[RMDB]
RNA sequence: GGGAACGACUCGAGUAGAGUCGAAAAGGAGGCAAGUUCGCUUGCCUCCAAAGAAGCUCAAAUUGACGCAAACAUCCGCGUCAUCGCGAGCAAGCGAGCAAAAAACCGUGAACUUCGGUUCACGGAACAAUUGUUAUCAGUUCGCUGAUAACAAUUGAAAAGAAACAACAACAACAAC
Reactivity to 2A3 in 0.01 (KOAc 150mM, MgCl2 10mM, bicine 150mM(pH8.5), 24C), signal-to-noise 5, nucleotides 027 to 126: g020g000a000g000g000c000a010a060g020u020u010c020g000c030u000u000g000c010c000u000c000c000a000a000a000g010a000a000g000c000u000c000a030a080a200u080u020g010a000c000g000c030a060a300a270c080a300u160c190c110g000c000g020u000c000a010u010c010g020c010g020a000g010c000a000a010g020c000g070a010g030c020a020a050a050a030a050a070c010c000g000u000g000a000a000c010u040u070c220g110g000u000u010c000a000c000g000g000a000a010
Reactivity to DMS in 0.01 (KOAc 150mM, MgCl2 10mM, bicine 150mM(pH8.5), 24C), signal-to-noise 8, nucleotides 027 to 126: g000g010a000g010g010c000a000a020g010u000u000c040g010c000u000u000g000c000c000u010c000c010a010a050a080g000a030a030g050c010u000c010a060a300a060u010u000g000a010c000g020c010a100a120a120c240a120u020c260c170g000c000g010u000c000a000u000c110g020c300g000a020g010c010a020a020g000c010g010a020g010c040a000a060a070a050a090a090c000c000g010u000g000a010a010c000u000u010c170g020g000u000u000c000a000c000g000g000a030a060